[RMDB]
RNA sequence: GGGAACGACUCGAGUAGAGUCGAAAACGACAAGGGUGUAAAGAUCGCUCUUUUACUCGGCAUUAUACCACCGUUAUCGGGUCAACAGAGUAGUUGCAAAUGACAACAAUGCUCAGGGUUAUGCUCUAAAAGUUCGUACCCUUCGGGGUACGAACAAGCUUAUUCCUGACUUCGGUCAGGAAUAAGCAAAAGAAACAACAACAACAAC
Reactivity to 2A3 in 0.01 (KOAc 150mM, MgCl2 10mM, bicine 150mM(pH8.5), 24C), signal-to-noise 2, nucleotides 027 to 156: c060g060a020c040a040a060g060g040g070u060g050u220a160a140a010g110a100u210c020g000c030u020c000u000u030u010u120a070c050u000c020g050g010c010a000u010u080a050u170a070c010c070a070c110c000g060u190u130a080u300c020g020g000g020u070c030a020a090c060a090g000a000g000u040a010g010u020u020g000c040a090a120a180u230g050a120c000a020a000c000a040a130u120g000c000u000c020a000g010g000g000u100u030a000u040g030c000u000c010u140a070a120a060a080g000u000u000c000g000u000a000c000c000c000u000u000c060g090g000g000g000u000a000c000g010a000a000c000a000a000